[RMDB]
RNA sequence: GGGAACGACUCGAGUAGAGUCGAAAAACGCGGCAUUUUUAGCUGGUCGGAUGGCGAAGGUACAGGCGACAGGAUCGACAAUGAAGGCCCUGCAAUUCAGGCCGCAUUCAAAUCCGAUCCGCGUGUAUACGAGCUAAAAUUUCGAUUUUAGCUCGUAAAAAGAAACAACAACAACAAC
Reactivity to 2A3 in 0.01 (KOAc 150mM, MgCl2 10mM, bicine 150mM(pH8.5), 24C), signal-to-noise 4, nucleotides 027 to 126: a000c050g010c010g010g050c060a080u060u040u030u080u300a050g000c020u030g050g000u030c020g020g030a070u030g050g040c070g040a060a020g070g000u100a060c040a060g010g070c020g030a030c030a040g020g020a020u010c020g030a030c040a060a040u140g030a130a070g000g020c020c000c000u020g020c100a070a190u100u180c010a000g000g050c020c000g000c000a000u030u030c030a020a040a030u020c020c000g010a010u000c000c010g010c000g000u010g010u010a090
Reactivity to DMS in 0.01 (KOAc 150mM, MgCl2 10mM, bicine 150mM(pH8.5), 24C), signal-to-noise 7, nucleotides 027 to 126: a070c070g010c030g020g000c080a060u010u000u010u010u010a090g010c050u000g020g010u010c030g010g000a070u010g010g010c110g010a120a060g010g020u000a060c070a090g000g030c040g020a070c110a170g010g000a050u000c020g020a100c250a060a060u000g010a050a090g000g010c070c010c030u010g000c270a090a140u010u010c070a050g000g010c030c060g000c030a040u000u010c030a050a090a080u010c040c020g000a060u000c030c040g020c030g010u010g000u000a130